Structure probing data (DMS and 2A3) for a 177-nucleotide construct.
Reactivities are given for positions 27 through 126.
For 2A3, 27,095 sequencing reads were counted.
The RNA was probed in 150 mM KOAc, 10 mM MgCl2 and 150 mM bicine (pH 8.5) at 24 C.
RNA sequence: GGGAACGACUCGAGUAGAGUCGAAAAGAUAUGGAUCUUGGGGAGCCUUCCCAUCGGAAACGAUGGUCGUGAGGGCGACGAUCCACGAGAUCCUAAGUCAAAAUCGAUGGUGUUCGCACCAUCGAAAUCACCUAUUGAAGUUCGCUUCAAUAGGUGAAAAAGAAACAACAACAACAAC
Reactivity to DMS in 0.01 (KOAc 150mM, MgCl2 10mM, bicine 150mM(pH8.5), 24C), signal-to-noise 8, nucleotides 027 to 126: g010a010u000a030u010g000g000a010u000c000u000u000g010g000g000g000a020g020c010c000u000u000c040c000c000a000u000c000g020g000a010a020a030c000g020a000u000g000g000u020c260g010u010g010a010g010g030g030c290g000a110c300g000a020u000c000c000a020c120g000a010g000a010u010c000c000u000a000a080g000u000c010a120a060a070a090u000c000g010a010u000g000g020u000g010u000u010c200g020c000a010c000c000a000u000c000g010a010a050a110
Reactivity to 2A3 in 0.01 (KOAc 150mM, MgCl2 10mM, bicine 150mM(pH8.5), 24C), signal-to-noise 5, nucleotides 027 to 126: g000a000u020a010u040g000g000a000u020c010u020u030g000g010g000g000a010g010c010c000u020u020c000c000c000a000u000c000g000g010a010a010a000c010g010a010u010g020g080u150c210g270u200g140a100g040g000g000c000g000a020c000g000a010u000c010c000a010c060g110a050g000a000u000c000c000u010a010a010g010u010c020a020a020a020a300u030c010g000a000u000g010g030u020g040u060u110c280g030c090a000c010c000a000u000c000g000a000a000a000